Source information: This 177-nucleotide RNA was probed chemically with 2A3 and DMS. Values cover nucleotides 27 to 126. The reactions ran in a buffer of 150 mM KOAc, 10 mM MgCl2 and 150 mM bicine (pH 8.5), at 24 C. The data come from the RNA Mapping Database (RMDB), libraries RFM100 and RFMREP. As a SHAPE reagent, 2A3 marks flexible, mostly unpaired nucleotides at the ribose 2'-OH. For 2A3 the reverse transcriptase was SuperScript II with manganese.
[RMDB]
RNA sequence: GGGAACGACUCGAGUAGAGUCGAAAAUCCCCACCGGGGCGGAUGCCACGAUUUUGCGGUUGAACUGUUCGUUUUCUUCUAAUUGAAACGCAUUGACUUCGGCGGGCAACAGCAUUUUACGCUCAAACCAUGGAGGGAGAUUCGUCUCCCUCCAUGGAAAAGAAACAACAACAACAAC
Reactivity to 2A3 in 0.01 (KOAc 150mM, MgCl2 10mM, bicine 150mM(pH8.5), 24C), signal-to-noise 4, nucleotides 027 to 126: u000c000c000c000c000a030c010c060g020g000g000g000c010g030g040a030u090g020c030c020a090c070g030a040u080u060u060u150g010c020g000g000u010u050g040a060a060c020u030g050u070u060c000g040u010u050u050u000c060u130u060c060u120a170a200u100u190g040a030a030a000c000g010c040a070u010u080g030a040c030u010u020c020g000g000c040g000g140g000c000a030a000c010a030g010c000a020u020u020u050u140a040c040g010c000u040c000a090a040a070
Reactivity to DMS in 0.01 (KOAc 150mM, MgCl2 10mM, bicine 150mM(pH8.5), 24C), signal-to-noise 2, nucleotides 027 to 126: u000c060c000c000c240a080c100c090g000g000g000g020c010g000g050a030u020g000c030c020a090c150g010a070u010u020u030u000g020c050g010g060u010u000g010a050a090c040u020g000u000u000c070g040u040u010u020u000c030u000u030c120u000a100a040u030u010g010a070a040a020c090g000c110a120u000u030g000a080c070u010u000c050g020g010c040g000g000g000c010a000a070c100a060g000c040a010u030u000u000u000a080c060g010c000u020c020a070a080a140